Structure probing data (2A3 and DMS) for a 177-nucleotide construct. It was measured as part of the RMDB library OK2TST. 2A3 adducts were read by reverse transcription with SuperScript II with manganese. The reactions ran in a buffer of 150 mM KOAc, 10 mM MgCl2 and 150 mM bicine (pH 8.5), at 24 C. The DMS profile rests on 1,458 reads.
RNA sequence: GGGAACGACUCGAGUAGAGUCGAAAACGGGCUUCGGGCUGAACCUGGGACUAGGGUAUCUGAGUCCUUACCGCAUACCAACCCCAAAAGGGAUUUCCUUAUCCGGGACGCCCCAGCACCGAUGGGCACAGUGCCAUACUUUCGAGUAUGGCACUGUAAAAGAAACAACAACAACAAC
Reactivity to 2A3 in 0.01 (KOAc 150mM, MgCl2 10mM, bicine 150mM(pH8.5), 24C), signal-to-noise 1, nucleotides 027 to 126: c040g010g010g010c030u090u110c110g010g020g060c090u070g000a100a070c000c030u010g070g030g040a030c060u080a080g050g000g050u120a050u080c060u100g030a040g060u000c000c000u020u080a040c010c020g040c030a000u040a090c010c030a010a070c000c030c000c020a090a070a000a090g100g030g010a060u070u080u040c020c000u030u040a050u080c020c030g000g000g000a010c010g030c000c000c000c000a030g030c050a130c000c000g030a040u090g000g060g000c060
Reactivity to DMS in 0.01 (KOAc 150mM, MgCl2 10mM, bicine 150mM(pH8.5), 24C), signal-to-noise 1, nucleotides 027 to 126: c090g010g010g020c050u000u000c170g010g040g000c030u000g030a090a070c130c060u010g020g010g000a050c130u000a080g020g000g000u000a050u000c050u010g000a110g000u020c050c030u000u010a140c060c060g030c130a050u010a140c150c050a100a160c050c010c000c020a070a090a070a200g000g000g000a050u010u010u010c020c040u000u000a050u000c080c040g000g010g030a190c090g020c000c000c020c110a090g000c040a090c030c010g020a040u010g000g000g030c110